[RMDB]
RNA sequence: GGGAACGACUCGAGUAGAGUCGAAAAGUCUAGCGAACGGAUCCCACCCGGGACACACGCAAGUCGCGAAUUAGGCCGACCGGCCAAGGUCAAUCGCAGAACUCAACUGCAUGAGUAAGCUAGACGACGCAUAAUUACGUUUCGACGUAAUUAUGCGAAAAGAAACAACAACAACAAC
Reactivity to 2A3 in 0.01 (KOAc 150mM, MgCl2 10mM, bicine 150mM(pH8.5), 24C), signal-to-noise 3, nucleotides 027 to 126: g010u000c000u000a020g000c010g040a070a100c030g070g050a120u010c000c000c000a030c000c050c030g020g000g010a010c020a010c000a010c140g030c070a070a040g060u040c030g010c010g040a050a130u170u050a180g000g030c010c030g040a130c090c100g040g000c030c020a010a000g030g010u040c040a030a060u040c030g000c040a040g050a120a080c040u050c150a060a140c060u070g000c010a050u060g010a000g050u020a010a030g000c000u010a000g000a000c020g010a000
Reactivity to DMS in 0.01 (KOAc 150mM, MgCl2 10mM, bicine 150mM(pH8.5), 24C), signal-to-noise 5, nucleotides 027 to 126: g010u000c000u000a000g010c010g000a190a090c050g000g010a140u000c010c010c010a190c300c060c150g000g040g010a080c120a160c050a060c040g000c070a060a060g000u000c070g000c010g000a050a120u000u000a160g010g000c010c000g020a160c130c120g000g000c030c040a050a120g010g010u000c030a080a060u000c040g000c000a090g000a070a080c110u000c110a070a140c130u000g010c050a060u000g020a150g010u010a070a230g010c000u000a000g000a030c010g050a180